Structure probing data (DMS and 2A3) for a 177-nucleotide construct.
The data come from the RNA Mapping Database (RMDB), library OK2TST.
Conditions: 150 mM KOAc, 10 mM MgCl2 and 150 mM bicine (pH 8.5), 24 C.
DMS adducts were read by reverse transcription with MarathonRT.
For DMS, 4,261 sequencing reads were counted.
As a SHAPE reagent, 2A3 marks flexible, mostly unpaired nucleotides at the ribose 2'-OH.
Reactivities are given for positions 27 through 126.
For 2A3, 1,783 sequencing reads were counted.
RNA sequence: GGGAACGACUCGAGUAGAGUCGAAAACGGAAGCAAAGGUUUCAUUUUGGGCUCCUUUUCUUCUGGUGGUCGCAGUCAACCUGAUGUUGGCAGUCCAGGUGGUGAUGCAUCUUUGAGCGCUCCUGUAGAUAAUAUGCGUCUUCGGACGCAUAUUAUCAAAAGAAACAACAACAACAAC
Reactivity to DMS in 0.01 (KOAc 150mM, MgCl2 10mM, bicine 150mM(pH8.5), 24C), signal-to-noise 2, nucleotides 027 to 126: c030g000g000a040a040g020c100a020a040a030g000g010u000u000u010c010a160u010u000u010u000g030g000g000c050u010c010c010u000u000u000u000c000u000u000c020u000g010g010u010g010g020u010c040g020c060a090g000u000c030a070a070c060c120u000g000a100u010g010u000u000g020g010c040a090g000u010c040c060a050g000g020u000g000g010u020g010a140u010g020c070a060u010c030u000u000u010g010a060g020c050g010c020u000c010c010u010g000u010a110
Reactivity to 2A3 in 0.01 (KOAc 150mM, MgCl2 10mM, bicine 150mM(pH8.5), 24C), signal-to-noise 2, nucleotides 027 to 126: c010g010g020a010a010g020c030a000a040a030g040g000u060u070u030c020a090u100u230u210u280g140g000g000c020u050c000c000u040u010u010u030c020u000u000c010u000g090g010u040g080g000u070c080g030c080a030g030u030c000a020a040c010c070u120g060a060u220g080u080u070g070g030c000a010g040u020c000c050a000g040g030u040g000g060u070g020a030u040g000c030a050u010c010u070u100u120g080a040g010c030g000c020u000c030c000u080g020u090a020